An RNA of 177 nucleotides, treated with DMS and read out base by base. The data come from the RNA Mapping Database (RMDB), library M2PK50.
RNA sequence: GGGAACGACUCGAGUAGAGUCGAAAACAUCGCGACUUCGGUCGCGAUGAAAGUUGUGCUCCCUCACGCAUAACAAAUCCCAUUGAGGGUAGGUGACUGCAAAACGACACGCCUUCGGGCGUGUCAAAACAGGUUUAUCCUUCGGGAUAAACCUGUUAAAAGAAACAACAACAACAAC
Reactivity to DMS in 0.01 (KOAc 150mM, MgCl2 10mM, bicine 150mM(pH8.5), 24C), signal-to-noise 1, nucleotides 027 to 126: c010a010u000c010g000c000g040a010c000u000u020c200g040g010u000c010g010c010g010a000u000g000a020a080a090g030u000u010g010u010g020c020u010c040c000c020u010c010a070c120g030c020a000u000a020a020c030a060a090a110u000c000c000c020a110u000u000g010a050g000g000g000u000a070g040g000u000g010a100c070u000g020c100a040a070a120a080c140g000a010c000a000c000g000c010c000u020u020c250g000g010g010c010g050u000g000u000c010a010a010

For DMS the reverse transcriptase was MarathonRT.